[RMDB]
RNA sequence: GGGAACGACUCGAGUAGAGUCGAAAAUCGGUGCCUAUGGCUGGUGUGGAGGACAAAGGAAAACAUUGCACUAGUAGAUAUGUUUUCUCGUGCACCAAUGUUUUGGAGCUUGAUGACACUGGUGACGAUAGUGCAUGCAGUUCGCUGCAUGCACUAUAAAAGAAACAACAACAACAAC
Reactivity to DMS in 0.01 (KOAc 150mM, MgCl2 10mM, bicine 150mM(pH8.5), 24C), signal-to-noise 2, nucleotides 027 to 126: u000c070g010g010u000g010c020c040u020a090u000g020g010c030u000g020g040u000g010u000g000g010a080g000g020a070c100a080a100a130g010g000a020a030a030a040c040a030u000u000g020c140a090c060u000a120g000u010a060g000a130u000a030u010g000u000u000u010u000c010u000c080g010u000g010c010a040c060c010a020a040u000g010u000u000u000u010g030g010a140g000c030u010u000g000a140u010g010a050c050a030c060u010g000g000u000g000a070c100g010
Reactivity to 2A3 in 0.01 (KOAc 150mM, MgCl2 10mM, bicine 150mM(pH8.5), 24C), signal-to-noise 1, nucleotides 027 to 126: u050c000g070g050u020g010c030c010u050a080u110g030g000c030u050g020g020u060g010u050g070g080a130g040g080a010c010a030a100a040g130g000a060a020a000a050c010a010u060u090g090c050a060c100u030a050g100u070a040g120a160u120a020u150g060u030u040u000u050c020u010c030g010u100g080c000a000c000c010a000a040u090g040u000u070u030u050g090g050a060g000c060u080u130g130a040u080g000a060c010a010c010u020g030g000u020g030a010c030g030

The record gives the reactivity of an RNA of 177 nucleotides to DMS and 2A3. For DMS the reverse transcriptase was MarathonRT. The reactions ran in a buffer of 150 mM KOAc, 10 mM MgCl2 and 150 mM bicine (pH 8.5), at 24 C. Values are in units of 0.01, from 0 to 300, in steps of 10. 2A3 adducts were read by reverse transcription with SuperScript II with manganese. The 2A3 profile rests on 1,107 reads. For DMS, 2,255 sequencing reads were counted.